[RMDB]
Background: The record gives the reactivity of an RNA of 207 nucleotides to 2A3. The 2A3 profile rests on 1,775 reads. For 2A3 the reverse transcriptase was SuperScript II with manganese. The reactions ran in a buffer of 150 mM KOAc, 10 mM MgCl2 and 150 mM bicine (pH 8.5), at 24 C. The data come from the RNA Mapping Database (RMDB), library M2RFPK.

RNA sequence: GGGAACGACUCGAGUAGAGUCGAAAAGCCACUUAGGAUUUUAGGCUCCCCGUGCGUGUCUCGAACCAUGCCGGGCCAAACCCACGGGGGCUGGCGGUCCCCGUGCGGUCAAAAUCAAACCGCUGGAAAAACAGUUCUAGCUUCGGCUAGAACUGAAGACUACAUAAUUCUUCGGAAUUAUGUAGUCAAAAGAAACAACAACAACAAC
Reactivity to 2A3 in 0.01 (KOAc 150mM, MgCl2 10mM, bicine 150mM(pH8.5), 24C), signal-to-noise 2, nucleotides 027 to 156: g010c000c000a040c120u120u170a070g090g100a240u150u100u060u170a050g000g020c020u090c010c020c000c000g030u150g050c020g000u040g050u050c120u100c290g090a070a040c040c000a020u030g000c000c010g010g000g000c020c000a080a020a000c000c010c050a000c000g000g000g000g000g010c000u000g000g000c000g000g010u000c000c030c010c000g000u010g000c040g000g010u040c030a080a050a000a090u100c030a080a120a150c030c010g000c040u080g050g010a070a100a020a000a010c000a000g000u000u000c000u000a010g000c000u000u050c180g070g000c000u000a000g000a000a000c000u000g000a000a000